[RMDB]
RNA sequence: GGGAACGACUCGAGUAGAGUCGAAAACGCUGGGUCGUUCUCUAGCGUGGGAGCGACGAUCUAUGGGAAGAAGCACUGAAGCGCGCACGGUGUGUAAACCAUAGGGAGCUCCUCGGGACGACCUGUGCUGAAGCGCGCACGGCAACCGAAAGGUGCGGGUGCGGACAUACUUCGGUAUGUCCGCACCAAAAGAAACAACAACAACAAC
Reactivity to 2A3 in 0.01 (KOAc 150mM, MgCl2 10mM, bicine 150mM(pH8.5), 24C), signal-to-noise 1, nucleotides 027 to 156: c010g020c010u010g010g000g000u010c000g020u220u040c020u000c030u060a180g030c180g150u300g030g000g000a000g000c000g200a240c010g000a020u000c000u000a000u010g000g040g000a090a270g030a020a010g200c000a000c000u020g040a140a000g000c000g000c000g020c020a020c020g020g010u060g010u000g000u000a000a000a010c000c000a000u010a010g000g000g010a000g000c010u010c040c020u000c010g010g000g000a010c010g000a010c000c000u000g010u000g000c000u000g020a110a040g020c000g000c000g000c000a000c010g020g010c000a020a010c000c010g030a060a010a050g000g000u020g010c010g090